About this RNA
An RNA of 177 nucleotides, treated with DMS and read out base by base. For DMS, 711 sequencing reads were counted. The RNA was probed in 150 mM KOAc, 10 mM MgCl2 and 150 mM bicine (pH 8.5) at 24 C. Values cover nucleotides 27 to 126.

RNA sequence: GGGAACGACUCGAGUAGAGUCGAAAAGUUCUUGAUCGGUGCAGCUGCCGCUGGCGGCUACUAUCUCUGGCAAGAUGUUCACCGGGUUAUAUUGCAACCUGUCUAUACUCAAGGUCCGAAUAAGACCUGACCUAAUACCCUUCGGGGUAUUAGGUCAAAAAGAAACAACAACAACAAC
Reactivity to DMS in 0.01 (KOAc 150mM, MgCl2 10mM, bicine 150mM(pH8.5), 24C), signal-to-noise 1, nucleotides 027 to 126: g000u000u010c010u000u020g030a100u020c060g020g020u000g000c200a030g010c010u010g020c010c030g040c270u010g050g060c010g000g010c000u030a060c080u020a070u010c080u000c040u000g010g000c080a060a060g000a060u000g020u000u010c110a110c050c010g000g000g000u000u000a140u000a110u010u020g000c120a060a030c000c000u000g000u000c060u000a090u010a050c050u000c110a250a030g000g010u000c000c030g040a070a030u010a090a110g000a010c030c030